[RMDB]
RNA sequence: GGGAACGACUCGAGUAGAGUCGAAAACUUCAGCGCCCAUACUGCCCAAUGAGAUGCACACAGAAGCAGCGCCUCACAAUGUAUCUACUGGCGAGGCACGGACAGCCGAAGAAGGAAGCCGCGCACAAUCCAUAUCAUGCUUCGGCAUGAUAUGGAUAAAAGAAACAACAACAACAAC
Reactivity to 2A3 in 0.01 (KOAc 150mM, MgCl2 10mM, bicine 150mM(pH8.5), 24C), signal-to-noise 7, nucleotides 027 to 126: c030u130u090c050a030g000c020g020c010c010c010a040u100a060c050u090g040c000c000c010a060a080u140g030a040g010a070u070g020c020a010c010a000c020a040g090a140a010g040c060a020g040c020g020c060c000u030c000a050c020a050a090u150g020u060a090u090c060u070a050c020u050g050g020c040g050a050g010g040c020a010c040g030g010a020c020a020g010c010c020g090a110a070g030a020a020g080g020a050a020g010c010c010g020c010g020c010a030c030a060
Reactivity to DMS in 0.01 (KOAc 150mM, MgCl2 10mM, bicine 150mM(pH8.5), 24C), signal-to-noise 4, nucleotides 027 to 126: c060u010u010c060a070g030c070g010c030c020c020a060u020a080c060u010g000c030c030c030a100a080u020g010a060g010a060u010g020c020a040c050a090c090a060g030a120a120g000c070a090g020c030g000c020c010u000c020a030c070a070a060u020g000u030a060u010c050u010a070c090u010g000g020c040g000a050g020g000c020a080c050g000g010a080c080a140g010c000c020g010a080a050g010a100a120g000g010a080a100g020c030c030g000c040g000c060a060c150a060